[RMDB]
RNA sequence: GGGAACGACUCGAGUAGAGUCGAAAAGAUAUGGAGGGUGGUAGACAUGCCAAUAUUCGGAAACGAAUAAAAUGGCAACAGCUACCCACCCUCCUAAGUCAAAUCUGAGGCCGUUCGCGGCCUCAGACAGCAUCACACAGUUCGCUGUGUGAUGCUGAAAAGAAACAACAACAACAAC
Reactivity to 2A3 in 0.01 (KOAc 150mM, MgCl2 10mM, bicine 150mM(pH8.5), 24C), signal-to-noise 1, nucleotides 027 to 126: g000a020u050a010u110g000g010a000g000g010g000u030g030g040u010a030g020a100c140a300u280g000c010c010a040a010u000a000u040u000c000g020g000a010a000a020c020g000a010a000u050a090a210a090a140u090g000g070c020a110a050c130a240g020c060u000a010c000c030c000a040c000c000c020u000c000c000u000a010a000g000u010c010a000a020a130u010c000u000g000a000g000g020c110c010g010u090u080c300g020c030g200g120c000c020u000c010a010g000a020
Reactivity to DMS in 0.01 (KOAc 150mM, MgCl2 10mM, bicine 150mM(pH8.5), 24C), signal-to-noise 2, nucleotides 027 to 126: g000a010u000a170u000g000g000a030g010g010g020u010g000g000u000a010g010a070c100a130u000g030c000c000a050a150u000a000u010u000c000g030g000a060a070a110c020g030a020a000u000a000a140a110a130u000g000g000c000a070a070c300a130g010c040u000a020c170c050c080a000c000c000c000u010c000c000u000a000a030g000u000c000a110a090a210u020c010u010g010a000g000g020c000c000g000u000u030c170g030c030g000g020c000c000u000c010a000g000a010

Chemical mapping of a 177-nucleotide RNA with 2A3 and DMS. The RNA was probed in 150 mM KOAc, 10 mM MgCl2 and 150 mM bicine (pH 8.5) at 24 C. For DMS, 1,290 sequencing reads were counted. The data come from the RNA Mapping Database (RMDB), library TTRDES.